[RMDB]
RNA sequence: GGGAACGACUCGAGUAGAGUCGAAAAUCAACGCUAACGCCAAAUUUAAACGGCAAACAACAAAACAACUACGCUUUAGCAGCUUAAUAACCUGCUUGCGUGCUCCUGCUUUGCAUCGCCCAUGUGCCAAGUUAGGGGCUCAACUUUAGUGGGCUACCUAAAAGUAAGCCUUCGGGCUUACUUUUAGAAAAGAAACAACAACAACAAC
Reactivity to 2A3 in 0.01 (KOAc 150mM, MgCl2 10mM, bicine 150mM(pH8.5), 24C), signal-to-noise 4, nucleotides 027 to 156: u070c010a040a080c080g030c150u140a060a050c090g000c020c040a070a100a110u180u280u300a100a180a040c080g010g040c020a040a020a100c100a070a030c050a010a110a040a020c080a080a030c050u120a010c010g020c000u120u090u070a020g000c000a000g000c010u040u030a040a010u040a030a040c000c000u000g010c000u000u020g000c000g000u000g000c010u000c000c000u000g000c000u000u030u000g000c000a000u000c040g000c000c000c000a000u030g000u000g000c010c000a050a000g010u140u180a010g180g010g020g000c010u000c010a030a090c030u120u190u070a010g000u000g010g000g020c020u030a050c010
Reactivity to DMS in 0.01 (KOAc 150mM, MgCl2 10mM, bicine 150mM(pH8.5), 24C), signal-to-noise 2, nucleotides 027 to 156: u020c040a080a120c030g000c070u000a080a130c110g010c040c050a080a090a200u000u010u000a080a100a130c100g020g030c020a090a080a150c040a050a150c060a080a050a080a110c020a060a090c030u000a030c010g010c090u000u000u010a050g050c000a010g020c030u000u000a100a100u020a110a080c300c010u010g030c000u030u000g000c020g000u000g010c010u000c040c030u000g000c010u010u000u000g000c020a000u000c080g040c010c030c040a030u000g010u000g000c040c040a050a080g030u000u000a020g040g000g020g000c000u000c050a050a040c100u000u000u000a030g050u000g010g010g030c000u000a120c110
Source: RMDB library ARCHII, as collected in RNAgym. This 207-nucleotide RNA was probed chemically with 2A3 and DMS. For DMS the reverse transcriptase was MarathonRT. 2A3 is a SHAPE reagent: it acylates the 2'-hydroxyl of flexible nucleotides of all four kinds. Conditions: 150 mM KOAc, 10 mM MgCl2 and 150 mM bicine (pH 8.5), 24 C. 2A3 adducts were read by reverse transcription with SuperScript II with manganese. Reactivities are given for positions 27 through 156.